[RMDB]
RNA sequence: GGGAACGACUCGAGUAGAGUCGAAAAGUGGUCGAGUGCGAAGCACUGGGGUAGAGAAAUAAAGAGAAAGAGACCUUCCCCGUCAGUCAGUCACUCUCUGUCUGAAUCUCUCUCUCAAAGACCACGAGAUGCUACCACCUUUCGAGGUGGUAGCAUCAAAAGAAACAACAACAACAAC
Reactivity to DMS in 0.01 (KOAc 150mM, MgCl2 10mM, bicine 150mM(pH8.5), 24C), signal-to-noise 1, nucleotides 027 to 126: g020u000g010g070u000c000g010a040g090u030g000c040g020a240a140g010c000a000c000u000g010g000g010g000u070a010g000a020g000a030a040a180u000a050a190a040g000a020g020a070a060a040g060a090g010a070c080c210u000u000c000c000c010c120g020u070c100a070g000u010c040a040g000u000c060a110c080u000c000u000c010u000g000u000c040u000g060a060a060u020c020u010c000u010c000u000c070u000c000a000a010a160g000a000c000c000a020c000g030a120
Reactivity to 2A3 in 0.01 (KOAc 150mM, MgCl2 10mM, bicine 150mM(pH8.5), 24C), signal-to-noise 2, nucleotides 027 to 126: g000u040g030g000u010c060g010a030g000u000g000c020g260a180a000g060c000a000c020u020g000g000g020g080u130a000g000a020g100a060a100a000u170a060a240a000g070a030g000a010a110a000g060a060g040a030c000c000u020u030c040c020c000c000g010u070c040a010g000u030c000a000g020u020c000a060c040u060c000u000c000u010g010u020c000u040g070a190a170u020c000u000c000u000c000u040c000u000c020a050a040a030g000a000c000c000a000c000g030a010
Chemical mapping of a 177-nucleotide RNA with DMS and 2A3. Reactivities are rounded to 0.1 and cut off at 0 and 3. Source: RMDB library OK1LIB, as collected in RNAgym. The 2A3 profile rests on 989 reads. The RNA was probed in 150 mM KOAc, 10 mM MgCl2 and 150 mM bicine (pH 8.5) at 24 C.